[RMDB]
RNA sequence: GGGAACGACUCGAGUAGAGUCGAAAAUCUUAGGAGUUCGCUCCUAAGAAAAGGGCGAGGCCGUGCCAGCUCUUCGGAGCAAUACUCGGCCAGUCACACAGAAUGCGCUACCCUUCGGGGUAGCGAAUUCACACACCUUGUUCGCAAGGUGUGUGAAAAAAGAAACAACAACAACAAC
Reactivity to 2A3 in 0.01 (KOAc 150mM, MgCl2 10mM, bicine 150mM(pH8.5), 24C), signal-to-noise 1, nucleotides 027 to 126: u030c010u000u010a030g000g000a010g000u040u110c140g120c080u000c010c000u000a000a000g010a000a030a000a010g030g000g040c040g060a240g010g000c000c030g000u020g040c030c050a020g030c010u010c000u000u060c230g130g010a000g010c020a030a010u050a100c070u040c010g040g000c030c010a000g010u020c000a030c040a030c010a090g140a180a100u110g090c000g010c010u010a020c000c000c000u020u060c200g050g000g000g000u000a000g000c000g000a000a000
Reactivity to DMS in 0.01 (KOAc 150mM, MgCl2 10mM, bicine 150mM(pH8.5), 24C), signal-to-noise 2, nucleotides 027 to 126: u000c000u000u000a010g000g010a000g040u000u010c180g020c020u000c000c000u000a000a000g000a000a040a120a130g000g010g000c000g010a110g020g010c000c000g030u000g010c090c130a300g000c010u000c000u000u000c210g010g010a000g000c010a090a080u010a110c100u010c010g000g010c000c010a110g020u000c010a080c180a090c230a110g020a060a070u010g040c010g010c000u000a010c000c000c000u000u000c150g050g000g020g020u000a000g010c010g010a000a010

The data come from the RNA Mapping Database (RMDB), library M2PK50. An RNA of 177 nucleotides, treated with 2A3 and DMS and read out base by base. 2A3 is a SHAPE reagent: it acylates the 2'-hydroxyl of flexible nucleotides of all four kinds. For 2A3 the reverse transcriptase was SuperScript II with manganese. DMS adducts were read by reverse transcription with MarathonRT.